[RMDB]
RNA sequence: GGGAACGACUCGAGUAGAGUCGAAAAAGUUCAACGGGCUCACUGUUCUGCCGCCCCUGCUCACGGACGAGAUGAUCGCGCAGUACACGUCGGCGCUCCUGGCGGGGACGAUCACCAGCGGGUGGACCGACCAGUGUUACUUCGGUAACACUGGUCGAAAAGAAACAACAACAACAAC
Reactivity to 2A3 in 0.01 (KOAc 150mM, MgCl2 10mM, bicine 150mM(pH8.5), 24C), signal-to-noise 1, nucleotides 027 to 126: a010g100u080u050c020a030a020c010g010g020g110c000u030c040a010c010u070g020u120u020c040u010g070c010c010g000c000c000c000c000u020g000c060u060c020a070c030g090g000a030c040g030a040g010a090u120g050a070u110c110g000c020g000c170a040g070u040a170c080a010c110g130u110c000g050g140c040g030c010u010c020c020u030g000g000c000g000g010g000g000a000c030g010a020u020c040a050c100c010a020g030c030g060g010g000u030g000g000a060c060
Reactivity to DMS in 0.01 (KOAc 150mM, MgCl2 10mM, bicine 150mM(pH8.5), 24C), signal-to-noise 2, nucleotides 027 to 126: a080g010u000u010c030a120a060c120g010g010g030c000u010c050a050c040u000g000u000u000c060u000g010c160c060g000c020c060c020c000u010g010c020u020c100a080c140g050g020a090c050g010a150g000a050u000g000a060u000c110g020c080g020c040a090g010u000a210c110a080c050g010u000c020g000g000c050g000c120u000c010c010u020g050g000c030g000g030g000g040a020c070g020a080u010c070a090c120c020a080g000c060g000g040g000u010g010g010a060c090
Chemical mapping of a 177-nucleotide RNA with 2A3 and DMS. Values cover nucleotides 27 to 126. For DMS, 1,342 sequencing reads were counted. The RNA was probed in 150 mM KOAc, 10 mM MgCl2 and 150 mM bicine (pH 8.5) at 24 C. For 2A3, 1,094 sequencing reads were counted. Source: RMDB library OK2TRN, as collected in RNAgym.